[RMDB]
RNA sequence: GGGAACGACUCGAGUAGAGUCGAAAAGCGGUAGGGCUGACGCCGCAAAAGGGGAAGUUGAACCUGUCUGGGCAGGUUGAUCAGGUUGAGCAGGUUGAUCAGGUUGAGCAGGUUGAGCAGCCCGAGCCUAAUAGGCACGAUUCGUCGUGCCUAUUAGAAAAGAAACAACAACAACAAC
Reactivity to 2A3 in 0.01 (KOAc 150mM, MgCl2 10mM, bicine 150mM(pH8.5), 24C), signal-to-noise 7, nucleotides 027 to 126: g030c030g030g020u070a060g070g000g000c020u010g030a070c030g020c020c010g030c050a070a070a030a070g090g010g000g030a040a100g030u110u170g030a040a040c000c010u040g050u130c060u090g050g090g050c040a030g050g090u040u040g000a030u030c010a020g100g040u090u110g050a050g070c060a040g060g140u050u030g000a040u040c030a030g080g220u050u020g010a020g030c020a020g030g000u060u080g040a020g020c010a000g000c000c010c020g010a000g000c000
Reactivity to DMS in 0.01 (KOAc 150mM, MgCl2 10mM, bicine 150mM(pH8.5), 24C), signal-to-noise 6, nucleotides 027 to 126: g010c010g010g020u000a110g010g010g010c000u000g000a080c050g000c000c020g000c050a050a050a090a080g010g010g010g000a090a090g010u020u010g010a070a070c030c010u010g000u010c050u010g010g010g020c000a020g010g020u010u010g000a050u000c040a060g000g010u010u020g010a100g000c080a080g010g010u020u010g000a030u010c020a040g000g010u000u010g000a090g000c060a060g000g010u000u020g010a080g010c000a030g000c000c000c020g000a130g010c120

Conditions: 150 mM KOAc, 10 mM MgCl2 and 150 mM bicine (pH 8.5), 24 C. An RNA of 177 nucleotides, treated with 2A3 and DMS and read out base by base. For DMS the reverse transcriptase was MarathonRT. DMS (dimethyl sulfate) methylates the pairing face of unpaired adenines and cytosines.